An RNA of 170 nucleotides, treated with 2A3 and DMS and read out base by base.
Reactivities are rounded to 0.1 and cut off at 0 and 3.
The RNA was probed in 150 mM KOAc, 10 mM MgCl2 and 150 mM bicine (pH 8.5) at 24 C.
2A3 adducts were read by reverse transcription with SuperScript II with manganese.
DMS adducts were read by reverse transcription with MarathonRT.
As a SHAPE reagent, 2A3 marks flexible, mostly unpaired nucleotides at the ribose 2'-OH.
RNA sequence: GGGAACGACUCGAGUAGAGUCGAAAAUCCUGAGACCGGGGAGCUUCGACGAUCUCUUGUCUCUCCUGAAGGAGGAAGGAGCUCUCGAACGCUCUCCCGACCGCUCGGAUGGGCCGCUUCCGGCAAGAGAGGCUUGCCUUCGGGCAAGCCAAAAGAAACAACAACAACAAC
Reactivity to 2A3 in 0.01 (KOAc 150mM, MgCl2 10mM, bicine 150mM(pH8.5), 24C), signal-to-noise 3, nucleotides 027 to 129: u030c000c000u060g010a030g040a050c030c040g000g000g000g030a010g010c010u000u000c010g010a020c120g000a010u000c000u000c010u050u040g300u020c050u010c010u030c120c000u210g250a260a120g010g000a010g000g000a010a010g000g010a030g000c020u000c010u000c010g000a000a010c090g000c010u000c000u010c000c000c020g000a010c000c040g030c010u040c000g010g020a040u050g030g020g010c020c000g000c010u050u010c020c000g040g010c000a020a000g080a000g000a000
Reactivity to DMS in 0.01 (KOAc 150mM, MgCl2 10mM, bicine 150mM(pH8.5), 24C), signal-to-noise 2, nucleotides 027 to 129: u000c010c000u020g020a070g000a220c230c050g100g000g000g010a030g030c010u000u000c060g000a060c010g040a020u040c020u020c000u010u010g080u020c000u110c020u020c060c020u070g050a160a090g040g000a050g030g000a190a020g090g000a050g040c200u020c000u030c020g060a040a000c110g030c010u000c020u050c000c000c000g010a060c220c070g010c010u020c040g060g030a050u030g010g010g040c000c130g020c060u070u020c010c030g020g070c090a060a020g010a060g010a020